[RMDB]
RNA sequence: GGGAACGACUCGAGUAGAGUCGAAAAUCCGACGAGCUGAACGCUUUCGAAGGAAAGAUUGACCAGCUAAUCUUCUGCAACGCCAUUACGAGGACUGCCCUUAGAGGCUCAUGGCGAUAGGUCACCCAAAACUAUUUGAGGUUCGCCUCAAAUAGAACUAUACUCCCCCGUUCGCGGGGGAGUAUAGAAAAGAAACAACAACAACAAC
Reactivity to DMS in 0.01 (KOAc 150mM, MgCl2 10mM, bicine 150mM(pH8.5), 24C), signal-to-noise 1, nucleotides 027 to 156: u000c020c010g000a190c050g050a120g070c030u020g050a100a210c050g000c000u000u000u000c020g000a300a140g040g000a080a070a100g020a050u000u000g000a140c090c010a140g020c030u040a050a170u000c040u000u000c070u000g000c020a110a160c000g000c050c040a030u000u000a090c040g010a100g000g060a010c050u000g050c060c020c030u000u000a130g000a140g050g000c060u020c090a080u000g000g010c040g030a070u020a140g010g010u010c040a130c000c000c000a070a050a150a300c040u000a000u010u000u000g010a040g000g000u010u000c300g020c000c030u000c000a010a010a040u000a000g020a030a270
Reactivity to 2A3 in 0.01 (KOAc 150mM, MgCl2 10mM, bicine 150mM(pH8.5), 24C), signal-to-noise 3, nucleotides 027 to 156: u010c010c000g010a030c010g010a000g010c000u160g130a180a020c050g020c020u060u150u150c070g050a050a020g080g010a040a010a060g050a010u070u120g020a060c000c030a020g020c020u020a090a100u100c140u270u070c110u130g010c040a050a040c020g000c000c000a030u000u090a040c070g020a090g070g080a130c100u060g000c000c000c000u070u130a160g060a130g120g000c010u020c020a010u040g000g000c010g060a070u090a050g020g000u030c000a020c000c010c000a040a150a040a020c000u000a000u000u010u010g000a000g010g050u060u050c150g100c050c000u000c000a000a000a000u000a000g000a000a040